[RMDB]
RNA sequence: GGGAACGACUCGAGUAGAGUCGAAAAAAUGUCACGUAAAGAGAUGCAGAGUGGCCAUCCUCUUUCUGCCACCUUCAGCCCCAAACAGGGCGAUGACAAACCGCUCACUGGCCCCUUGCACACCAUAUGACAGUACCUGAUUCGUCAGGUACUGUCAAAAAGAAACAACAACAACAAC
Reactivity to DMS in 0.01 (KOAc 150mM, MgCl2 10mM, bicine 150mM(pH8.5), 24C), signal-to-noise 1, nucleotides 027 to 126: a060a060u000g010u000c010a040c100g030u020a040a080a030g040a070g000a040u010g010c060a060g000a140g010u010g000g000c030c040a010u000c020c060u000c050u060u000u000c070u000g030c080c040a040c040c020u000u000c050a190g020c000c040c010c050a060a050a120c210a040g020g010g010c010g000a030u020g010a150c060a090a160a030c040c030g000c050u010c000a090c090u010g010g020c000c030c010c020u000u000g040c080a040c070a060c040c110a020u000a080